This 177-nucleotide RNA was probed chemically with 2A3 and DMS. The data come from the RNA Mapping Database (RMDB), library OK1LIB. Reactivities are rounded to 0.1 and cut off at 0 and 3. Values cover nucleotides 27 to 126. DMS adducts were read by reverse transcription with MarathonRT.
RNA sequence: GGGAACGACUCGAGUAGAGUCGAAAAGAUACUAUCACCAUCGUGCAUUAUCGAAUGUGUCAUGCAUGGUAAUGCACUAGGAUGGAUCUGUACAUGACACAAUGAUUUAUCCGAUGGUGAUGGUAAGGCUUCACUAAGAUUUCGAUCUUGGUGGAGCAAAAGAAACAACAACAACAAC
Reactivity to 2A3 in 0.01 (KOAc 150mM, MgCl2 10mM, bicine 150mM(pH8.5), 24C), signal-to-noise 9, nucleotides 027 to 126: g070a020u050a010c000u000a000u000c000a000c000c000a000u020c040g030u020g020c020a010u010u030a000u020c080g210a300a190u040g030u020g160u200c080a070u200g010c000a010u040g000g000u030a030a010u010g000c000a010c020u030a030g030g010a020u010g010g010a010u000c000u020g060u070a060c040a160u160g070a060c020a000c010a110a190u170g010a010u010u030u060a020u010c000c010g000a000u010g000g010u000g000a000u000g000g000u000a010a020g100
Reactivity to DMS in 0.01 (KOAc 150mM, MgCl2 10mM, bicine 150mM(pH8.5), 24C), signal-to-noise 8, nucleotides 027 to 126: g010a150u000a010c000u010a010u000c000a010c000c000a040u010c040g010u010g010c030a010u000u000a000u010c000g030a110a060u010g010u020g000u000c100a030u010g010c020a020u000g010g010u010a010a020u000g000c010a020c020u020a100g010g010a030u000g000g000a010u000c000u000g010u000a110c060a050u010g000a050c070a050c040a120a080u020g010a020u000u000u000a020u000c010c000g000a050u000g000g020u000g000a000u000g010g000u000a020a060g010